[RMDB]
RNA sequence: GGGAACGACUCGAGUAGAGUCGAAAAGAAAGAAAGAAAGAGGUUGGGUGGGUCCAUCGACCGUCGUGGCGUAUUCGGACGCUUUACCACGACGCGAGGAAAUAGCGAGACCGACCACCCCCUUUAACAGAGGUAUAGUAGUUCGCUACUAUACCAACUUAAGACAUCGGUUCGCCGAUGUCUUAAGAAAAGAAACAACAACAACAAC
Reactivity to 2A3 in 0.01 (KOAc 150mM, MgCl2 10mM, bicine 150mM(pH8.5), 24C), signal-to-noise 3, nucleotides 027 to 156: g090a020a060a030g100a050a090a010g080a050a130a010g040a010g060g060u270u260g080g030g000u030g000g020g010u010c030c020a130u210c010g000a020c030c010g000u000c000g000u000g000g000c080g060u110a110u080u110c070g030g050a040c040g060c010u060u100u150a050c020c000a000c000g000a010c000g010c010g010a010g000g050a070a070a010u030a020g060c050g010a020g050a090c010c000g010a020c020c000a000c020c010c000c000c000u000u060u030a110a040c070a050g050a040g130g010u000a000u000a020g010u000a000g000u010u050c220g030c100u000a010c010u010a000u000a000c000c000a000a000
Reactivity to DMS in 0.01 (KOAc 150mM, MgCl2 10mM, bicine 150mM(pH8.5), 24C), signal-to-noise 2, nucleotides 027 to 156: g000a110a090a110g000a150a050a040g000a130a100a110g000a030g010g000u000u000g030g000g070u000g000g000g020u000c020c000a110u000c160g000a020c210c010g020u000c010g030u010g020g010c020g000u000a090u000u010c080g000g010a120c000g040c040u020u000u000a050c000c000a060c010g000a030c010g000c000g000a100g040g000a030a050a040u000a060g030c000g000a130g000a120c000c000g000a060c000c010a020c000c000c000c020c000u010u000u000a050a190c150a150g000a180g010g050u000a000u000a000g000u000a020g030u010u000c300g050c000u000a010c010u010a000u010a000c000c000a000a010
Chemical mapping of a 207-nucleotide RNA with 2A3 and DMS. It was measured as part of the RMDB library M2RFPK. The reactions ran in a buffer of 150 mM KOAc, 10 mM MgCl2 and 150 mM bicine (pH 8.5), at 24 C. For 2A3, 2,136 sequencing reads were counted. High 2A3 reactivity points to a flexible backbone, as in loops and unpaired stretches.